[RMDB]
RNA sequence: GGGAACGACUCGAGUAGAGUCGAAAAUAAAAAUGUUUCAUCCAAAGAGUUAUCGUGAUUCUUGUAUAGUGGUUUUGAAAGAGGAUGACACUAUCACGAUGUUUGACAUCCUUAAUUCGCAAGAAAAGCGAUUACGGAUAUUCGUAUCCGUAAUCGCAAAAGAAACAACAACAACAAC
Reactivity to 2A3 in 0.01 (KOAc 150mM, MgCl2 10mM, bicine 150mM(pH8.5), 24C), signal-to-noise 2, nucleotides 027 to 126: u210a010a030a000a000a000u160g030u030u020u020c050a060u050c050c050a000a160a000g040a110g000u300u120a120u050c020g030u010g060a070u110u030c050u050u160g010u070a040u030a040g020u040g100g070u080u180u120u180g130a110a060a030g040a010g050g000a010u050g000a000c010a000c050u130a110u150c000a000c080g060a010u140g100u090u110u080g000a000c000a000u050c000c000u030u040a120a100u210u140c020g000c020a000a060g030a050a140a000a000
Reactivity to DMS in 0.01 (KOAc 150mM, MgCl2 10mM, bicine 150mM(pH8.5), 24C), signal-to-noise 1, nucleotides 027 to 126: u010a050a030a050a090a020u000g000u050u000u010c030a130u170c050c020a100a120a080g000a060g000u020u030a070u020c020g010u020g010a080u000u000c070u000u060g000u000a040u030a040g020u000g050g030u000u020u000u060g000a050a090a050g000a000g000g000a030u000g000a040c000a000c000u010a070u000c050a020c150g000a020u000g000u020u000u070g000a140c070a020u000c000c000u000u000a040a110u000u000c050g020c180a050a050g000a030a060a060a140

This 177-nucleotide RNA was probed chemically with 2A3 and DMS. 2A3 adducts were read by reverse transcription with SuperScript II with manganese. DMS adducts were read by reverse transcription with MarathonRT. For 2A3, 812 sequencing reads were counted. For DMS, 1,294 sequencing reads were counted. The reactions ran in a buffer of 150 mM KOAc, 10 mM MgCl2 and 150 mM bicine (pH 8.5), at 24 C.